[RMDB]
RNA sequence: GGGAACGACUCGAGUAGAGUCGAAAACGCACUCGCAGCUUAAUAACCUGCGCUGAGCCCUUCUCCCCCAGCUUGCCUGUGUCCUAGGGAAUUGGAAGGUCAUCCUUCACAGCAUCGUGUGGAAGUCAUUACUCGUGAGUGUUCGCACUCACGAGAACAUGUAGUCAACCUUCGGGUUGACUACAUGAAAAGAAACAACAACAACAAC
Reactivity to DMS in 0.01 (KOAc 150mM, MgCl2 10mM, bicine 150mM(pH8.5), 24C), signal-to-noise 2, nucleotides 027 to 156: c040g000c050a110c020u000c010g000c030a030g020c010u000u000a150a150u000a100a080c260c010u010g000c030g040c120u000g000a140g000c020c040c030u000u000c080u000c020c010c000c010c030a000g050c030u000u010g000c020c030u010g000u010g020u000c030c010u000a120g010g030g010a100a080u010u010g030g000a120a070g000g020u000c040a140u000c010c010u000u000c020a080c160a070g010c040a060u000c070g000u010g010u010g020g000a060a160g000u000c030a000u000u000a110c000u000c010g060u000g000a020g030u000g020u000u000c300g020c010a020c010u000c000a010c000g010a000g020a020a160
Reactivity to 2A3 in 0.01 (KOAc 150mM, MgCl2 10mM, bicine 150mM(pH8.5), 24C), signal-to-noise 2, nucleotides 027 to 156: c080g010c040a050c010u020c010g000c010a000g000c000u070u040a020a010u050a060a080c020c000u000g020c030g020c130u050g020a050g040c000c040c000u120u070c100u100c010c000c000c040c000a060g070c000u060u120g050c010c010u060g010u010g050u110c000c030u040a040g000g030g010a050a080u060u080g070g020a050a030g000g060u100c010a040u080c000c020u070u060c020a060c000a050g030c000a030u100c060g040u010g000u030g010g000a070a000g080u070c040a120u040u120a090c000u000c010g000u000g000a010g000u000g030u030u050c100g020c030a000c000u000c000a000c000g000a000g000a010a000